[RMDB]
RNA sequence: GGGAACGACUCGAGUAGAGUCGAAAAACACAGGGUAAUCAGACAAAUAGAAUAGCAGCUAUUGAUGUUAGUAUGAUAUCUUCACACCUUGCCACCACUUAUUUGUCCCGAUUGGCACAAAUGUAUGUGUGCUACCCCCUUUCGAGGGGGUAGCACAAAAAGAAACAACAACAACAAC
Reactivity to 2A3 in 0.01 (KOAc 150mM, MgCl2 10mM, bicine 150mM(pH8.5), 24C), signal-to-noise 1, nucleotides 027 to 126: a010c100a000c040a000g000g000g020u110a020a100u040c040a000g120a030c040a050a040a000u020a000g020a070a130u090a060g000c000a000g080c040u210a070u060u030g010a040u110g130u090u030a070g000u050a130u110g040a030u090a070u080c010u050u130c000a000c030a100c000c000u000u110g020c000c000a060c000c000a000c000u010u010a050u060u110u020g030u070c000c000c100g100a090u070u130g000g030c000a000c000a000a000a000u160g040u170a030u130g150
Chemical mapping of a 177-nucleotide RNA with 2A3. The RNA was probed in 150 mM KOAc, 10 mM MgCl2 and 150 mM bicine (pH 8.5) at 24 C. For 2A3 the reverse transcriptase was SuperScript II with manganese. It was measured as part of the RMDB library OK1LIB. Reactivities are given for positions 27 through 126.